Conditions: 150 mM KOAc, 10 mM MgCl2 and 150 mM bicine (pH 8.5), 24 C. An RNA of 177 nucleotides, treated with 2A3 and DMS and read out base by base. Reactivities are given for positions 27 through 126. For 2A3 the reverse transcriptase was SuperScript II with manganese. High DMS reactivity at an A or C suggests that its Watson-Crick edge is free. It was measured as part of the RMDB library OK1LIB. The 2A3 profile rests on 3,129 reads.
[RMDB]
RNA sequence: GGGAACGACUCGAGUAGAGUCGAAAAACGUGUAGCUCUUGUGGCAAAAAUAAAUGGCAGUCAAAUGCUGGUGGGAGUGUUAUGUAAUGAGUUCCCAUUUCCCUUUGCUUUUGCCAUUCCACUUCCAGAUCCUAAUCGUCUUCGGACGAUUAGGAUCAAAAGAAACAACAACAACAAC
Reactivity to 2A3 in 0.01 (KOAc 150mM, MgCl2 10mM, bicine 150mM(pH8.5), 24C), signal-to-noise 4, nucleotides 027 to 126: a010c080g020u060g040u130a070g050c030u020c060u120u130g040u030g020g020c030a000a000a000a020a050u090a020a050a030u080g010g010c000a010g040u110c050a040a120a010u120g030c020u030g000g060u050g010g020g000a020g010u050g130u190u120a150u180g230u190a100a120u230g080a060g070u030u010c000c030c010a000u050u050u030c000c010c000u000u010u060g030c020u000u050u040u080g000c000c000a020u040u020c020c010a020c020u020u030c010c000a040
Reactivity to DMS in 0.01 (KOAc 150mM, MgCl2 10mM, bicine 150mM(pH8.5), 24C), signal-to-noise 1, nucleotides 027 to 126: a040c230g060u050g000u010a160g020c110u030c130u010u010g010u000g030g050c010a010a040a000a030a060u050a030a060a010u000g000g000c050a010g000u000c300a040a080a160u000g000c010u000g030g030u000g000g000g000a050g000u070g000u000u060a060u050g010u090a000a010u000g010a190g010u040u010c030c000c000a030u030u000u000c040c000c010u000u000u030g000c110u010u010u000u000g000c020c010a010u000u050c010c020a030c010u000u000c010c000a070